[RMDB]
RNA sequence: GGGAACGACUCGAGUAGAGUCGAAAAUACAGGUAACAGAACGGAAAGAAGUUCACUGUGCUUACAAGAAUUAGAUGCAAGCUAGACUGGUUCUGUUAAUAUCAGACAAAGUGGAUUUCAAAGCAAAUAUUUUACAUUACUUCGGUAAUGUAAAAUAAAAAGAAACAACAACAACAAC
Reactivity to 2A3 in 0.01 (KOAc 150mM, MgCl2 10mM, bicine 150mM(pH8.5), 24C), signal-to-noise 3, nucleotides 027 to 126: u110a010c050a010g130g020u020a060a010c010a010g040a020a010c010g060g110a130a070a100g010a050a030g000u010u000c010a000c030u050g030u060g020c010u040u030a030c020a070a030g180a250a200u180u140a160g070a160u060g020c020a010a010g000c010u020a020g010a050c040u060g050g000u020u010c000u010g000u000u000a030a010u090a040u100c050a020g030a080c020a050a120a000g010u010g010g010a000u020u060u020c050a060a060a030g060c020a040a160a040
Reactivity to DMS in 0.01 (KOAc 150mM, MgCl2 10mM, bicine 150mM(pH8.5), 24C), signal-to-noise 5, nucleotides 027 to 126: u020a170c140a120g000g000u000a010a020c030a020g010a030a020c030g020g010a120a120a130g010a020a010g020u000u000c010a020c000u000g010u000g010c000u000u000a010c030a030a110g010a070a130u010u010a090g010a120u000g000c020a020a020g010c020u000a170g010a090c040u010g010g020u000u000c010u000g000u000u000a030a090u000a080u010c060a040g000a120c100a050a070a020g010u000g000g000a020u000u010u010c010a120a090a150g010c200a050a060a130

An RNA of 177 nucleotides, treated with 2A3 and DMS and read out base by base. The DMS profile rests on 5,426 reads. The RNA was probed in 150 mM KOAc, 10 mM MgCl2 and 150 mM bicine (pH 8.5) at 24 C. For 2A3 the reverse transcriptase was SuperScript II with manganese. It was measured as part of the RMDB library OK2TST. For DMS the reverse transcriptase was MarathonRT.